[RMDB]
RNA sequence: GGGAACGACUCGAGUAGAGUCGAAAAUACAAGAAGGGGGGACGGAGAAGGCUAUGUUGGCCGCGCGACGGUUGUCCCGGUUUAAGCGUGUAGGCUGGUUUUCCAGGCAAAUCCGGAAGAAAAUGAACAGCUGUCAUCUAUUCGUAGAUGACAGCUGAAAAGAAACAACAACAACAAC
Reactivity to DMS in 0.01 (KOAc 150mM, MgCl2 10mM, bicine 150mM(pH8.5), 24C), signal-to-noise 1, nucleotides 027 to 126: u000a130c130a040a080g030a110a110g000g010g040g000g010g000a040c060g000g000a080g010a090a090g020g010c040u020a040u010g000u020u020g010g020c020c000g000c040g020c080g010a050c070g010g000u010u010g010u010c100c000c000g000g060u010u000u000a080a050g010c020g010u010g010u000a170g010g000c030u000g010g010u000u030u010u000c030c050a170g010g010c060a010a080a120u030c040c000g000g000a080a100g040a110a040a030a080u010g000a020a250